[RMDB]
RNA sequence: GGGAACGACUCGAGUAGAGUCGAAAAAACUCUCUGGAACGUCAGAUCGCUGAAUGUUGCUGUGAACUUCAGACUGCGAUCGCUGGUGUAACUACUGCGCGUAUCCAGGAUGAGUUAGAUGCAUGUCAUAACACUUACUCUUCGGAGUAAGUGUUAUAAAAGAAACAACAACAACAAC
Reactivity to DMS in 0.01 (KOAc 150mM, MgCl2 10mM, bicine 150mM(pH8.5), 24C), signal-to-noise 9, nucleotides 027 to 126: a030a010c010u000c000u000c000u010g010g010a030a020c010g010u000c180a110g010a030u000c010g020c010u010g000a070a120u000g010u000u000g010c080u010g020u010g000a100a180c020u010u000c010a020g000a300c060u000g000c020g010a010u000c000g020c130u010g010g010u000g000u010a100a100c270u010a010c020u000g020c200g010c010g000u000a120u000c000c000a010g000g010a050u010g000a020g000u000u000a050g010a070u000g010c130a080u010g010u000c120
Reactivity to 2A3 in 0.01 (KOAc 150mM, MgCl2 10mM, bicine 150mM(pH8.5), 24C), signal-to-noise 3, nucleotides 027 to 126: a000a000c000u000c000u010c010u000g000g000a010a010c000g010u030c070a070g020a010u000c010g020c010u010g030a080a040u080g030u070u040g040c120u160g140u170g280a050a030c000u010u010c000a020g020a050c030u030g000c000g000a010u000c000g000c050u060g030g030u030g010u030a040a060c040u060a020c000u080g020c000g000c000g020u040a300u100c000c000a000g040g020a130u180g000a000g010u030u010a040g000a030u120g060c090a070u170g070u130c020

Conditions: 150 mM KOAc, 10 mM MgCl2 and 150 mM bicine (pH 8.5), 24 C. This 177-nucleotide RNA was probed chemically with DMS and 2A3. Values are in units of 0.01, from 0 to 300, in steps of 10. For DMS, 23,523 sequencing reads were counted. The data come from the RNA Mapping Database (RMDB), library OK2TST. The 2A3 profile rests on 3,333 reads.